[RMDB]
RNA sequence: GGGAACGACUCGAGUAGAGUCGAAAAGUAUCAAGGACAUGAAGCAGUUCAGCCAGGUGGCCAAGGCCUACCAGGACCGCUAUCAGGACCUGGGGGCCUACAGUUCUGCCAGGAAGUGCCUGGCCAAACAGAGGCAGAGGAUGCUGCAAGAGAGAAAUAAUCGUCAAAAUUUCGAUUUUGACGAUUAAAAAGAAACAACAACAACAAC
Reactivity to 2A3 in 0.01 (KOAc 150mM, MgCl2 10mM, bicine 150mM(pH8.5), 24C), signal-to-noise 2, nucleotides 027 to 156: g070u070a040u170c050a080a030g030g010a040c000a050u110g060a060a020g010c010a010g030u080u070c010a000g040c000c040a010g010g030u030g090g000c030c030a070a010g000g000c000c000u070a300c070c010a000g000g020a100c000c010g080c140u090a120u300c160a080g030g010a060c020c010u010g000g000g010g020g000c010c000u000a000c010a000g000u030u060c010u020g020c000c030a010g080g040a100a070g030u040g080c000c000u000g020g000c000c000a010a000a000c030a020g020a030g050g000c010a000g010a000g020g020a010u040g020c030u050g000c010a060a000g040a010g000a010g030a060a100a060
Reactivity to DMS in 0.01 (KOAc 150mM, MgCl2 10mM, bicine 150mM(pH8.5), 24C), signal-to-noise 2, nucleotides 027 to 156: g000u000a040u010c050a140a060g000g000a060c030a100u000g010a120a100g010c020a100g000u020u000c070a070g020c000c020a080g040g030u000g020g050c020c040a140a100g010g030c010c000u000a110c060c010a050g010g010a110c000c010g030c130u000a120u000c130a130g030g020a120c010c020u000g010g000g010g020g060c000c020u000a010c030a060g000u000u000c020u010g050c070c020a080g010g010a120a110g010u000g000c020c010u000g030g020c000c040a030a040a070c040a110g000a150g030g010c020a030g000a050g000g000a140u010g010c050u000g020c010a060a060g010a120g020a180g000a080a080a210
Chemical mapping of a 207-nucleotide RNA with 2A3 and DMS. The RNA was probed in 150 mM KOAc, 10 mM MgCl2 and 150 mM bicine (pH 8.5) at 24 C. For DMS, 4,024 sequencing reads were counted.